[RMDB]
RNA sequence: GGGAACGACUCGAGUAGAGUCGAAAACAUGUUGAAAUGCAGGUGAUGGCCGCGCUUGAUGCCAAGCGGGAUCGGAUAGCCAAGCUUGCGGAAGAUGACGCCUGAUUGCGGCCCAAGCGCCACCACAGCUAAAAUUUAUGUUCGCAUAAAUUUUAGCAAAAGAAACAACAACAACAAC
Reactivity to 2A3 in 0.01 (KOAc 150mM, MgCl2 10mM, bicine 150mM(pH8.5), 24C), signal-to-noise 4, nucleotides 027 to 126: c020a020u100g050u020u120g150a110a170a140u190g020c050a040g060g050u030g070a140u120g060g010c040c010g040c010g000c030u030u050g030a050u210g080c040c010a030a030g010c000g010g020g020a040u080c020g060g000a050u110a040g010c000c010a040a080g060c090u130u160g010c030g030g030a070a020g040a050u080g060a010c070g050c090c030u100g050a210u060u150g010c050g020g010c010c020c000a020a020g020c040g020c020c010a010c020c010a040c030a000
Reactivity to DMS in 0.01 (KOAc 150mM, MgCl2 10mM, bicine 150mM(pH8.5), 24C), signal-to-noise 5, nucleotides 027 to 126: c070a080u010g010u000u010g000a080a100a080u000g010c060a070g010g020u000g000a170u000g010g010c040c250g010c040g000c040u000u000g010a100u010g010c070c010a050a170g020c030g010g000g010a120u000c030g020g010a190u010a100g010c040c020a070a220g010c090u000u000g010c100g010g000a070a060g010a240u010g010a070c060g010c030c020u000g000a080u010u010g020c170g020g020c010c190c030a060a050g000c040g010c020c040a040c040c020a060c140a130

This 177-nucleotide RNA was probed chemically with 2A3 and DMS. The DMS profile rests on 4,804 reads. For 2A3, 3,342 sequencing reads were counted. The RNA was probed in 150 mM KOAc, 10 mM MgCl2 and 150 mM bicine (pH 8.5) at 24 C. It was measured as part of the RMDB library OK2TST. For DMS the reverse transcriptase was MarathonRT.